[RMDB]
RNA sequence: GGGAACGACUCGAGUAGAGUCGAAAAUAAAGAAAGAAUUCGACACAAUGGGGUUGCGUCACCUAUAGUUUUCAUUUCCUCAAAUGCAACUCAAGGUGCUCAGCUUGAUAAAGGGAGAGAGGGAGGGAGAUAUACCGUUGUUCGCAACGGUAUAUCUAAAAGAAACAACAACAACAAC
Reactivity to 2A3 in 0.01 (KOAc 150mM, MgCl2 10mM, bicine 150mM(pH8.5), 24C), signal-to-noise 2, nucleotides 027 to 126: u090a000a080a030g130a040a110a030g090a060a170u220u140c100g070a020c000a000c010a070a120u110g080g000g020g000u030u040g010c000g040u100c030a040c020c010u070a060u060a190g030u010u020u070u080c060a030u040u070u060c030c010u140c050a050a060a000u020g000c000a010a000c000u010c020a000a000g010g000u020g000c050u030c050a030g040c000u070u060g040a050u140a120a060a060g030g000g000a300g010a000g010a040g060g020g000a220g010g000g070
Reactivity to DMS in 0.01 (KOAc 150mM, MgCl2 10mM, bicine 150mM(pH8.5), 24C), signal-to-noise 2, nucleotides 027 to 126: u010a050a110a110g000a100a100a100g020a160a190u000u000c070g010a040c060a010c160a110a070u010g000g000g020g000u000u000g000c050g010u000c080a020c020c030u000a100u010a030g030u000u010u010u000c070a070u020u000u020c080c070u000c180a040a070a050u000g050c300a030a010c000u000c120a090a060g010g010u000g000c080u030c030a080g020c020u020u000g020a100u000a020a070a100g000g010g000a070g000a020g000a100g000g000g000a090g020g000g000
An RNA of 177 nucleotides, treated with 2A3 and DMS and read out base by base.
2A3 adducts were read by reverse transcription with SuperScript II with manganese.
DMS adducts were read by reverse transcription with MarathonRT.
For 2A3, 1,186 sequencing reads were counted.